[RMDB]
RNA sequence: GGGAACGACUCGAGUAGAGUCGAAAACGUACUCAUGUCAUGUACAUGUACUCUAGUACCGUACACGCUAGAUCGAGCGUGCACCAUGCGCUAGUCAUGGGUACUGCCAUGUCUAUCGUCACGUCGAAGGUAUGUGGUGAUUCGUCACCACAUACCUAAAAGAAACAACAACAACAAC
Reactivity to DMS in 0.01 (KOAc 150mM, MgCl2 10mM, bicine 150mM(pH8.5), 24C), signal-to-noise 3, nucleotides 027 to 126: c160g000u000a030c030u010c040a040u020g010u000c040a140u000g010u010a060c020a040u000g010u000a060c100u000c140u000a080g020u010a020c040c300g010u000a080c040a010c020g000c030u000a080g010a140u000c180g000a090g000c010g000u000g010c070a090c020c170a060u010g000c030g000c060u010a060g000u000c000a020u000g010g000g020u000a040c100u010g000c030c010a060u000g000u010c010u000a030u000c020g030u000c110a060c190g010u010c100g010a200
Reactivity to 2A3 in 0.01 (KOAc 150mM, MgCl2 10mM, bicine 150mM(pH8.5), 24C), signal-to-noise 4, nucleotides 027 to 126: c030g020u020a010c050u020c040a020u030g030u040c030a110u150g050u120a030c020a030u040g060u060a060c070u050c080u150a050g020u030a030c020c060g010u030a010c030a000c040g000c020u060a050g040a300u100c070g070a020g040c010g000u000g040c020a060c020c010a030u100g020c040g030c060u070a060g020u110c000a010u000g000g020g000u050a090c050u060g050c010c010a060u150g010u010c020u040a050u020c010g040u060c050a020c130g120u040c080g140a050
Chemical mapping of a 177-nucleotide RNA with DMS and 2A3. The reactions ran in a buffer of 150 mM KOAc, 10 mM MgCl2 and 150 mM bicine (pH 8.5), at 24 C. For DMS the reverse transcriptase was MarathonRT. 2A3 adducts were read by reverse transcription with SuperScript II with manganese. The data come from the RNA Mapping Database (RMDB), library OK2TRN. The 2A3 profile rests on 4,527 reads. For DMS, 2,978 sequencing reads were counted.